[RMDB]
RNA sequence: GGGAACGACUCGAGUAGAGUCGAAAAACGUCUGGUCUUCGGACCAGACGUAAAAAACCUUUGUGAUUAGGGAGAUCCAUCCGGUCCCAUUGGGACCGAUGAAGAUCAUCGAUCUAAUCACUCUGGUAAAAAAGGCAGGAACUUCGGUUCCUGCCAAGGUAUUCGGUAUGUUCGCAUACCGAAUACCAAAAGAAACAACAACAACAAC
Reactivity to 2A3 in 0.01 (KOAc 150mM, MgCl2 10mM, bicine 150mM(pH8.5), 24C), signal-to-noise 1, nucleotides 027 to 156: a000c000g000u000c000u030g000g020u010c020u060u140c300g010g000a000c010c000a050g000a000c000g000u030a070a000a000a000a000a000c000c020u000u000u030g000u010g000a000u000u000a010g030g000g000a030g000a010u010c030c030a000u090c130c090g000g000u000c140c080c230a230u300u300g000g000g020a000c000c020g000a000u020g000a040a090g030a040u020c020a040u230c030g050a030u000c000u000a000a000u000c000a020c010u000c000u010g000g000u100a070a070a000a000a070a000g010g000c010a000g010g000a020a020c030u090u170c250g110g030u030u000c000c000u020g000c000c010a000a000

Structure probing data (2A3) for a 207-nucleotide construct.
The 2A3 profile rests on 694 reads.
The RNA was probed in 150 mM KOAc, 10 mM MgCl2 and 150 mM bicine (pH 8.5) at 24 C.
It was measured as part of the RMDB library RNAMAK.